Structure probing data (2A3 and DMS) for a 177-nucleotide construct. The data come from the RNA Mapping Database (RMDB), library OK2TRN. Conditions: 150 mM KOAc, 10 mM MgCl2 and 150 mM bicine (pH 8.5), 24 C. In probing experiments dimethyl sulfate is read out at A N1 and C N3, which are open when not base-paired. As a SHAPE reagent, 2A3 marks flexible, mostly unpaired nucleotides at the ribose 2'-OH.

[RMDB]
RNA sequence: GGGAACGACUCGAGUAGAGUCGAAAACAACGACCAGUGCCCCAUGUGCAUGAACAGCUCGCUGAAAGAUGUUGAUGGCGCCAAUGCUCAGGGCUAUGACACCGGAAUCGGUGGCUCCACAUCGACAUACGAUCAGGUGAUUCGUCACCUGAUCGUAAAAAGAAACAACAACAACAAC
Reactivity to 2A3 in 0.01 (KOAc 150mM, MgCl2 10mM, bicine 150mM(pH8.5), 24C), signal-to-noise 2, nucleotides 027 to 126: c030a020a060c060g040a070c050c040a030g050u040g060c020c000c000c020a030u130g030u050g000c010a010u090g060a170a040c040a040g000c000u000c040g030c030u030g040a100a070a000g060a030u070g050u140u170g030a080u050g120g000c010g020c010c040a090a040u100g000c000u010c010a060g050g040g060c000u050a050u140g000a030c020a020c020c010g030g140a160a170u230c000g060g010u000g030g010c000u030c050c020a110c000a070u060c000g060a040c000a050
Reactivity to DMS in 0.01 (KOAc 150mM, MgCl2 10mM, bicine 150mM(pH8.5), 24C), signal-to-noise 2, nucleotides 027 to 126: c110a090a040c080g010a120c050c020a050g010u020g000c040c030c040c070a080u010g010u000g010c010a020u000g030a070a080c160a060g020c030u000c070g020c050u000g000a140a150a120g020a080u000g000u000u020g010a030u000g010g020c050g000c050c080a070a040u010g000c040u010c060a100g010g000g000c110u020a030u010g000a150c030a000c010c020g000g010a090a110u020c030g010g010u000g020g020c050u000c020c090a090c100a040u010c040g000a040c150a140